RNA sequence: GGGAACGACUCGAGUAGAGUCGAAAACAGAGUGGUGAGGCCCCAUCUUGGUGGCAGAUUUUGAGUGUAGGGAGCCUUGGUGGCAAAUUUUGGAAGAGCCCUCUGGGAAGAUGGAGUAUUGGCCGAGGGCCAUGAAAUUAUUCGUAAUUUCAUGGCCAAAAGAAACAACAACAACAAC
Reactivity to 2A3 in 0.01 (KOAc 150mM, MgCl2 10mM, bicine 150mM(pH8.5), 24C), signal-to-noise 3, nucleotides 027 to 126: c020a010g080a030g110u160g040g030u040g020a050g020g070c000c020c000c000a010u010c030u070u060g050g020u060g030g020c050a030g020a100u070u110u130u140g090a060g040u060g020u080a070g020g030g050a030g010c030c030u030u070g050g030u060g020g000c040a020a080a110u220u210u080u110g060g020a050a020g020a030g050c000c000c000u020c030u020g010g020g030a020a030g030a020u090g020g020a040g020u090a060u180u120g080g000c010c000g020a040g010
Reactivity to DMS in 0.01 (KOAc 150mM, MgCl2 10mM, bicine 150mM(pH8.5), 24C), signal-to-noise 6, nucleotides 027 to 126: c060a110g000a090g020u010g010g020u000g000a140g020g010c030c020c030c030a070u000c070u000u000g010g020u010g010g020c060a050g000a100u000u000u010u020g010a090g020u000g020u000a070g010g000g000a170g000c050c040u000u000g020g020u000g000g010c050a060a060a150u000u000u010u010g010g000a080a080g000a270g000c030c010c020u000c040u000g020g010g000a070a070g010a070u000g010g000a060g000u000a100u010u000g010g010c020c030g000a120g010